Source information:
The record gives the reactivity of an RNA of 177 nucleotides to DMS and 2A3. For 2A3 the reverse transcriptase was SuperScript II with manganese. Reactivities are given for positions 27 through 126. DMS adducts were read by reverse transcription with MarathonRT. Values are in units of 0.01, from 0 to 300, in steps of 10. In probing experiments dimethyl sulfate is read out at A N1 and C N3, which are open when not base-paired. The 2A3 profile rests on 1,953 reads. Conditions: 150 mM KOAc, 10 mM MgCl2 and 150 mM bicine (pH 8.5), 24 C.
RNA sequence: GGGAACGACUCGAGUAGAGUCGAAAAUUAAGAGCAUACUUCAGGGCCUCAGGUCGGGUUCUGGCUUGGGCGGCAGCACGGGGGGCUGGUGUCUCACCCUCAGGCCGCGUGAGGCUCCCUCCUGCUGGAUCCGUAGGAUUUUCGAAUCCUACGGAUCAAAAGAAACAACAACAACAAC
Reactivity to DMS in 0.01 (KOAc 150mM, MgCl2 10mM, bicine 150mM(pH8.5), 24C), signal-to-noise 3, nucleotides 027 to 126: u010u010a070a100g010a110g010c060a080u010a070c100u000u010c050a070g000g000g010c020c020u000c050a070g000g020u010c090g020g000g010u000u000c030u010g020g010c060u000u010g010g010g000c050g010g010c010a040g010c050a080c260g010g010g000g010g000g020c300u000g020g010u000g000u000c020u010c010a060c030c020c020u010c070a050g010g010c040c050g010c130g030u000g000a030g010g000c030u000c010c030c010u010c010c010u010g020c080u010g030
Reactivity to 2A3 in 0.01 (KOAc 150mM, MgCl2 10mM, bicine 150mM(pH8.5), 24C), signal-to-noise 2, nucleotides 027 to 126: u180u060a090a060g030a020g070c050a060u080a230c070u090u100c050a030g040g030g030c000c020u020c050a030g010g150u140c060g060g080g000u160u190c050u060g030g000c000u000u040g020g090g030c050g040g000c010a020g030c050a070c180g000g000g000g020g000g030c080u120g040g200u100g050u030c020u010c030a050c000c020c000u090c030a030g100g000c030c010g000c030g040u030g010a020g000g000c030u080c000c000c010u030c000c000u030g030c030u040g080